[RMDB]
An RNA of 177 nucleotides, treated with DMS and read out base by base. Conditions: 150 mM KOAc, 10 mM MgCl2 and 150 mM bicine (pH 8.5), 24 C. For DMS, 780 sequencing reads were counted. Values cover nucleotides 27 to 126.
RNA sequence: GGGAACGACUCGAGUAGAGUCGAAAAUUCGUUGGUAUAAGAUCUGGAGAGUUACACCCUGAGGACCUAACCAUUGCUGGAUGGCAAGCUUGUGACUAAGAACUAAUAUUCAACUCUUCUAAUAUUCACCUCCCCUUCAUUUCGAUGAAGGGGAGGUAAAAGAAACAACAACAACAAC
Reactivity to DMS in 0.01 (KOAc 150mM, MgCl2 10mM, bicine 150mM(pH8.5), 24C), signal-to-noise 1, nucleotides 027 to 126: u030u000c110g080u000u010g000g000u000a030u030a120a090g010a110u010c020u020g000g010a150g000a090g040u000u000a020c100a090c030c060c020u000g010a260g020g010a080c040c040u010a080a100c000c050a090u000u000g000c070u000g000g000a030u010g030g000c060a040a080g000c160u010u000g000u000g020a080c050u000a100a050g010a080a080c110u010a080a010u000a070u010u010c020a040a040c120u000c080u000u000c030u020a070a080u000a210u000u010c090